Chemical mapping of a 177-nucleotide RNA with 2A3 and DMS.
The reactions ran in a buffer of 150 mM KOAc, 10 mM MgCl2 and 150 mM bicine (pH 8.5), at 24 C.
The data come from the RNA Mapping Database (RMDB), library OK2TRN.
DMS adducts were read by reverse transcription with MarathonRT.
2A3 is a SHAPE reagent: it acylates the 2'-hydroxyl of flexible nucleotides of all four kinds.
2A3 adducts were read by reverse transcription with SuperScript II with manganese.
RNA sequence: GGGAACGACUCGAGUAGAGUCGAAAAUCUGAAAUCAAGUGCUCUCUUCACUGUGAGUUAAACGCAUAGUCUCAGGAAGUCAAAUUAAUAUUCCUCUUGCUCAGGUGAGUAUUAGCAAAAUAAAGACCCUUGCGUAAGUAUUCGUACUUACGCAAGGAAAAGAAACAACAACAACAAC
Reactivity to 2A3 in 0.01 (KOAc 150mM, MgCl2 10mM, bicine 150mM(pH8.5), 24C), signal-to-noise 3, nucleotides 027 to 126: u020c020u060g030a070a040a030u100c050a070a040g060u020g070c000u050c000u000c010u140u110c020a040c070u080g040u020g220a000g040u070u200a050a140a030c040g020c050a100u060a220g050u040c030u000c070a000g060g030a040a010g070u080c080a030a030a260u220u160a090a070u140a100u130u020c010c000u010c010u030u050g000c010u010c070a030g000g080u050g040a010g000u050a070u100u120a000g010c030a000a070a050a110u140a060a130a010g060a040c000
Reactivity to DMS in 0.01 (KOAc 150mM, MgCl2 10mM, bicine 150mM(pH8.5), 24C), signal-to-noise 3, nucleotides 027 to 126: u000c010u020g000a040a110a110u000c140a120a090g000u000g010c030u010c130u000c040u000u000c080a070c060u010g010u000g010a090g000u010u010a080a110a080c100g030c140a090u010a060g000u000c040u010c120a060g010g010a060a060g010u000c140a040a050a100u010u000a060a090u000a120u000u000c000c010u000c080u000u000g010c060u000c080a180g030g000u000g000a000g020u010a060u000u010a020g040c130a060a040a090a060u020a110a100a120g010a090c150